Source: RMDB library RNAMAK, as collected in RNAgym.
Chemical mapping of a 207-nucleotide RNA with 2A3.
Reactivities are rounded to 0.1 and cut off at 0 and 3.
The reactions ran in a buffer of 150 mM KOAc, 10 mM MgCl2 and 150 mM bicine (pH 8.5), at 24 C.
2A3 adducts were read by reverse transcription with SuperScript II with manganese.
[RMDB]
RNA sequence: GGGAACGACUCGAGUAGAGUCGAAAACGCGUGUCGUUCGCGACACGCGAAAAAAACCUUUGUGCGUGCGGAGCAACAGCCCAUGUUUCCCAUUGGGAAAUUGUGGGACAUGCUCCCACGCACUCUGGUAAAAAAACUAUCCGUUCGCGGAUAGUAACCUUUGCCUUCCUUUCGAGGAAGGCAAAGGAAAAGAAACAACAACAACAAC
Reactivity to 2A3 in 0.01 (KOAc 150mM, MgCl2 10mM, bicine 150mM(pH8.5), 24C), signal-to-noise 2, nucleotides 027 to 156: c020g010c010g000u020g040u020c040g040u050u070c300g000c030g200a000c000a000c000g070c000g000a000a000a000a000a000a000a000c010c010u000u000u000g000u000g000c000g000u000g010c300g010g020a010g010c020a050a060c060a130g010c000c000c000a000u000g060u010u000u010c060c070c210a300u270u300g000g000g000a000a000a000u210u300g000u000g010g000g040a020c010a030u020g000c000u000c000c000c000a000c000g030c000a000c000u000c000u000g000g010u110a200a000a000a000a000a000a000c000u000a000u000c010c010g000u050u040c200g020c040g090g010a000u010a000g010u030a010a050